[RMDB]
RNA sequence: GGGAACGACUCGAGUAGAGUCGAAAAUUUCGUGCGCGAGGACUGGCCCGAGGGCGUCGCGCCUAUCUUCACGAUCGACCGCACGCCCGACUGGUCGGCUGCCACGAUCUCGGCGUUCGGCAAGCGCACAUUUUACCCGGUUCGCCGGGUAAAAUGUAAAAGAAACAACAACAACAAC
Reactivity to DMS in 0.01 (KOAc 150mM, MgCl2 10mM, bicine 150mM(pH8.5), 24C), signal-to-noise 2, nucleotides 027 to 126: u000u000u000c080g020u000g000c120g030c020g020a250g020g000a120c020u000g000g010c000c010c060g020a300g030g000g010c020g000u000c130g030c110g020c020c020u000a040u000c010u000u000c270a150c200g000a030u000c050g000a050c120c030g000c110a010c020g000c000c000c010g000a160c180u000g000g040u000c010g000g000c020u000g000c010c020a050c040g010a030u000c020u000c070g010g010c010g000u000u000c060g020g000c060a120a150g010c010g030c050
Reactivity to 2A3 in 0.01 (KOAc 150mM, MgCl2 10mM, bicine 150mM(pH8.5), 24C), signal-to-noise 2, nucleotides 027 to 126: u050u020u040c030g000u000g030c070g000c140g300a090g030g210a220c010u010g030g010c010c000c010g010a050g000g010g050c020g000u040c090g050c010g020c000c000u000a000u000c030u180u260c210a090c250g030a030u000c030g040a050c030c030g010c000a010c000g000c000c020c000g040a110c040u030g050g000u020c000g040g040c010u040g000c000c000a040c000g000a020u030c010u000c030g060g030c060g030u080u160c030g040g070c070a050a040g000c000g010c030
An RNA of 177 nucleotides, treated with DMS and 2A3 and read out base by base. DMS adducts were read by reverse transcription with MarathonRT. For 2A3, 1,333 sequencing reads were counted. The DMS profile rests on 1,818 reads. The RNA was probed in 150 mM KOAc, 10 mM MgCl2 and 150 mM bicine (pH 8.5) at 24 C.